[RMDB]
RNA sequence: GGGAACGACUCGAGUAGAGUCGAAAAACACCGCCGGGUAGUUGCGGUCGUCGAACGCCCCGCGAACGGCGGCGAUGGUGGCGGGGGCCAUGGCGUGGCGUCCCACCCCCAGCUCCAGGCCCCGGGCGCUAAAUUGUGCGUUCGCGCACAAUUUAGCAAAAGAAACAACAACAACAAC
Reactivity to 2A3 in 0.01 (KOAc 150mM, MgCl2 10mM, bicine 150mM(pH8.5), 24C), signal-to-noise 2, nucleotides 027 to 126: a000c070a000c000c010g000c010c000g010g000g130u140a140g110u070u140g100c060g070g000u020c020g060u050c070g050a130a050c020g010c000c020c030c090g010c010g020a070a040c060g010g000c040g010g030c000g070a080u120g040g020u090g050g040c040g010g020g000g020g000c000c030a090u110g050g000c100g040u080g060g030c040g060u070c050c010c010a040c010c000c000c010c000a050g010c000u030c000c020a030g040g000c000c020c000c000g010g040g020c050
Reactivity to DMS in 0.01 (KOAc 150mM, MgCl2 10mM, bicine 150mM(pH8.5), 24C), signal-to-noise 2, nucleotides 027 to 126: a140c080a150c040c030g010c010c010g080g000g030u030a080g010u000u070g020c200g000g000u010c060g020u000c060g030a110a150c050g010c000c020c040c080g010c020g000a030a050c010g000g050c050g010g010c060g020a200u050g000g020u010g000g000c060g000g010g000g030g010c110c030a060u030g000g010c130g040u000g000g000c060g010u030c060c000c080a300c020c020c000c000c000a080g020c010u010c030c020a090g000g000c000c000c000c000g010g000g000c050

An RNA of 177 nucleotides, treated with 2A3 and DMS and read out base by base. Values cover nucleotides 27 to 126. For DMS the reverse transcriptase was MarathonRT.